[RMDB]
RNA sequence: GGGAACGACUCGAGUAGAGUCGAAAAGCCGAUGAAUAGCCGAGAAGCCUGGCUCGAAAUCGUCGACGCAUCGACGACGGUCCUGCCAUGAGACCGUAACGAGGACAUGUCGCCUCGAAUGGCGUCGUAUAACAUGAGUGGUUCGCCACUCAUGUAACGGUAUCCUCUUAUUCGUAAGAGGAUACCGAAAAGAAACAACAACAACAAC
Reactivity to DMS in 0.01 (KOAc 150mM, MgCl2 10mM, bicine 150mM(pH8.5), 24C), signal-to-noise 2, nucleotides 027 to 156: g010c100c030g020a110u000g020a110a180u010a070g000c060c010g010a190g010a130a140g050c020c000u000g000g030c020u010c050g010a050a180a040u000c040g060u000c000g010a070c090g000c110a120u000c050g020a040c000g010a040c010g020g000u000c000c020u000g000c000c190a090u000g020a080g000a060c010c010g020u020a050a120c030g000a050g000g010a090c030a170u000g010u010c030g030c030c000u010c030g000a110a040u000g020g020c000g020u000c010g020u000a110u000a130a080c000a010u000g020a020g080u000g000g010u010u000c300g010c050c000a020c000u000c000a000u000g010u000a030a080
Reactivity to 2A3 in 0.01 (KOAc 150mM, MgCl2 10mM, bicine 150mM(pH8.5), 24C), signal-to-noise 4, nucleotides 027 to 156: g070c050c030g000a070u120g070a120a180u100a070g020c030c040g020a030g070a150a010g030c020c080u090g040g030c010u010c010g060a080a060a100u010c010g000u000c000g020a060c060g020c110a140u070c020g010a000c000g010a000c000g000g000u010c000c000u040g010c030c010a030u040g030a010g000a070c000c010g000u070a000a020c020g000a000g000g020a020c030a120u200g040u210c110g020c030c010u000c000g000a010a020u030g030g000c000g020u060c030g000u040a110u060a250a000c010a000u010g000a000g010u000g040g000u060u130c160g040c080c000a000c000u020c000a000u000g000u000a010a000